Chemical mapping of a 177-nucleotide RNA with 2A3 and DMS. DMS adducts were read by reverse transcription with MarathonRT. For 2A3 the reverse transcriptase was SuperScript II with manganese.
RNA sequence: GGGAACGACUCGAGUAGAGUCGAAAAUGUCCUUUUUCGGUUAUCAUGGUACCGAUGCUGUAGAUCUGAAAGGUACAGUACUGUGAUAGCUGAAGAAUGGUGAAACAUAUCAAGUUCGCUUGAUAUGCACAUAUUCAUCGUUCGCGAUGAAUAUGUGAAAAGAAACAACAACAACAAC
Reactivity to 2A3 in 0.01 (KOAc 150mM, MgCl2 10mM, bicine 150mM(pH8.5), 24C), signal-to-noise 7, nucleotides 027 to 126: u130g080u090c000c000u040u000u000u000u010c010g010g000u010u000a000u000c000a010u010g020g000u000a010c010c040g150a290u050g000c020u060g080u210a120g040a300u110c130u170g160a180a110a050g030g000u020a010c010a020g000u000a000c000u000g000u000g010a000u000a010g000c000u000g000a000a000g020a020a040u150g050g000u120g060a110a070a020c000a000u000a000u010c000a000a010g020u040u050c160g060c100u000u000g000a000u000a010u020g010
Reactivity to DMS in 0.01 (KOAc 150mM, MgCl2 10mM, bicine 150mM(pH8.5), 24C), signal-to-noise 6, nucleotides 027 to 126: u010g000u010c000c010u000u000u000u000u000c010g010g010u000u000a010u000c000a010u000g010g010u000a010c010c010g010a120u000g010c020u000g010u000a170g010a150u020c200u020g010a080a130a220g000g010u000a030c060a040g000u000a010c000u010g020u000g000a010u000a000g010c010u000g000a000a010g000a010a020u010g030g010u000g000a120a110a280c000a010u000a000u000c000a010a010g000u000u010c240g020c010u000u000g000a010u000a000u000g000

The reactions ran in a buffer of 150 mM KOAc, 10 mM MgCl2 and 150 mM bicine (pH 8.5), at 24 C.